[RMDB]
The data come from the RNA Mapping Database (RMDB), library TTRINS. Chemical mapping of a 177-nucleotide RNA with DMS.
RNA sequence: GGGAACGACUCGAGUAGAGUCGAAAAGAUAUGGAGGUCUGAGCCUUGGAUUUAUGUAUUUCUAAAGUGCUACUCGGAAACGAGUAGCACUUUGAAAUACAUUGUCAGGCUUUGGACCUCCUAAGUCCGAAUAAAUUGUGUUCGCACAAUUUAUUCGAAAAGAAACAACAACAACAAC
Reactivity to DMS in 0.01 (KOAc 150mM, MgCl2 10mM, bicine 150mM(pH8.5), 24C), signal-to-noise 2, nucleotides 027 to 126: g010a080u010a300u000g010g010a020g000g010u000c000u000g010a000g010c000c000u010u010g020g010a030u010u010u000a000u010g010u000a000u000u000u000c010u020a010a010a010g020u000g000c000u000a010c000u010c000g010g010a130a120a220c010g030a020g010u000a010g010c000a000c000u000u000u000g000a010a020a010u000a010c000a010u000u010g010u000c000a030g010g000c000u000u000u010g060g000a020c000c000u000c000c000u000a010a080g000u010c070

The reactions ran in a buffer of 150 mM KOAc, 10 mM MgCl2 and 150 mM bicine (pH 8.5), at 24 C.
DMS adducts were read by reverse transcription with MarathonRT.